This 177-nucleotide RNA was probed chemically with 2A3 and DMS. 2A3 adducts were read by reverse transcription with SuperScript II with manganese. The data come from the RNA Mapping Database (RMDB), library OK2TRN. For DMS, 5,433 sequencing reads were counted.

RNA sequence: GGGAACGACUCGAGUAGAGUCGAAAAAGACCAAUAAGUGAGCCCAAAGUGUUAUUCUCAUUAGCAGAGUGUAUUUGUUCUCCUUGUUGAUAAGCAAUCAACCCACUAUUUCUGCUUGAUCCGCCUGAAAUUGUAGACCUUUCGAGGUCUACAAUUUAAAAGAAACAACAACAACAAC
Reactivity to 2A3 in 0.01 (KOAc 150mM, MgCl2 10mM, bicine 150mM(pH8.5), 24C), signal-to-noise 2, nucleotides 027 to 126: a010g040a070c020c000a000a040u110a100a010g040u030g120a010g020c040c010c000a010a040a030g100u080g050u140u020a040u110u010c030u000c060a160u120u130a020g060c090a000g030a010g010u040g040u020a110u030u060u050g000u030u010c020u020c000c000u010u020g020u010u000g020a060u020a150a030g030c040a040a040u080c010a030a110c020c010c000a040c030u030a070u020u090u020c010u030g010c020u010u010g010a020u040c000c010g000c050c040u010g000
Reactivity to DMS in 0.01 (KOAc 150mM, MgCl2 10mM, bicine 150mM(pH8.5), 24C), signal-to-noise 5, nucleotides 027 to 126: a100g010a110c080c020a040a030u010a040a040g010u000g000a080g010c130c120c020a030a060a050g020u010g010u010u000a060u010u000c020u010c010a170u010u010a100g020c100a050g000a040g010u000g000u000a100u000u000u000g000u000u000c020u010c010c020u000u000g010u000u010g000a050u000a040a070g010c120a060a070u000c090a060a120c030c050c020a080c110u000a080u000u010u000c050u000g000c040u000u010g000a060u000c050c050g030c040c060u000g000